[RMDB]
RNA sequence: GGGAACGACUCGAGUAGAGUCGAAAAAGUCAGAGGGCGCUACCAUGUAAACUAGGGCUGGCUACUCUUGCACAGAAUCACAUCUCGAUAAUUGUCAGUGCAAGAAGGACAAUUAUACCAUUUAAUGAAAACGUUUACCUGUUCGCAGGUAAACGAAUCUUACUGACUCGUUCGCGAGUCAGUAAGAAAAAGAAACAACAACAACAAC
Reactivity to DMS in 0.01 (KOAc 150mM, MgCl2 10mM, bicine 150mM(pH8.5), 24C), signal-to-noise 1, nucleotides 027 to 156: a090g020u000c050a130g000a050g010g030g000c030g040c010u000a080c000c030a100u010g010u000a040a010a130c070u010a130g010g020g030c030u020g030g000c030u000a190c030u000c000u010u010g030c000a000c020a140g000a170a090u030c060a090c130a110u000c070u010c110g000a120u000a050a020u000u000g020u050c010a300g010u000g020c000a050a030g000a040a170g020g010a080c030a030a070u000u000a050u010a100c010c060a150u000u000u000a120a110u010g000a110a090a080a230c010g000u000u000u000a010c000c010u000g020u000u020c240g000c010a000g000g000u000a000a000a010c000g010a020a040
Reactivity to 2A3 in 0.01 (KOAc 150mM, MgCl2 10mM, bicine 150mM(pH8.5), 24C), signal-to-noise 3, nucleotides 027 to 156: a000g050u020c020a010g000a020g090g080g070c060g020c130u070a020c000c080a080u120g030u120a050a090a110c090u100a050g030g020g000c030u020g040g000c010u030a070c020u000c010u010u020g000c010a010c000a010g120a090a060u180c030a040c030a150u030c070u080c190g060a020u010a020a020u000u010g010u020c010a010g000u020g010c000a000a000g020a010a030g030g010a000c000a000a000u030u000a020u020a060c020c080a090u120u190u180a220a170u150g070a030a090a010a010c010g000u000u000u000a000c000c010u020g020u030u050c210g000c050a000g010g000u000a000a000a000c000g000a010a000
An RNA of 207 nucleotides, treated with DMS and 2A3 and read out base by base. The data come from the RNA Mapping Database (RMDB), library M2RFOK. For 2A3 the reverse transcriptase was SuperScript II with manganese.